[RMDB]
RNA sequence: GGGAACGACUCGAGUAGAGUCGAAAAGAAUGUGAUCCAGACAGGCGGAAAGAGCGAGAUAGGUUUCGAUUUACUUAGAUCCGUCAUUUGGGAAGGUGCUAAGGUUGCUGGCGACCUAUCAAAACAAAUGCCGCUAUAGUUUCGACUAUAGCGGCAUAAAAGAAACAACAACAACAAC
Reactivity to DMS in 0.01 (KOAc 150mM, MgCl2 10mM, bicine 150mM(pH8.5), 24C), signal-to-noise 1, nucleotides 027 to 126: g000a110a090u000g030u000g010a110u000c050c010a120g000a050c100a120g020g000c020g010g010a040a070a180g000a030g010c050g000a100g000a140u000a060g000g000u000u010u000c080g050a110u000u000u000a140c040u000u000a010g020a140u010c020c020g000u010c010a220u020u010u020g000g000g010a020a030g000g000u000g020c030u000a050a030g000g000u020u000g010c040u000g000g020c070g000a090c020c000u020a010u000c040a080a090a080a090c180a080a070
Structure probing data (DMS) for a 177-nucleotide construct. The RNA was probed in 150 mM KOAc, 10 mM MgCl2 and 150 mM bicine (pH 8.5) at 24 C. For DMS the reverse transcriptase was MarathonRT.